[RMDB]
RNA sequence: GGGAACGACUCGAGUAGAGUCGAAAAGGCGCGUCCGAUUCUUGAAAUCACUUACCCACCGGUGGAACUGGUAAAAAACGCGGUCAGAAUUAUGGAGCAUAAGUCCGGGGUGGCCCGUUCUGUAUGGCGACCACCAGUGGUUCGCCACUGGUGGUCGAAAAGAAACAACAACAACAAC
Reactivity to DMS in 0.01 (KOAc 150mM, MgCl2 10mM, bicine 150mM(pH8.5), 24C), signal-to-noise 1, nucleotides 027 to 126: g000g000c040g020c020g030u000c040c050g010a110u010u000c040u000u010g000a060a070a060u000c030a100c110u050u000a150c100c020c040a060c020c020g020g070u000g000g000a050a150c040u000g020g010u000a000a060a040a100a130a120c050g020c060g000g010u000c000a080g000a120a030u000u000a050u010g010g000a070g000c040a100u000a060a150g020u000c030c000g060g030g010g010u000g030g000c000c010c040g000u010u010c040u010g000u000a080u000g020g000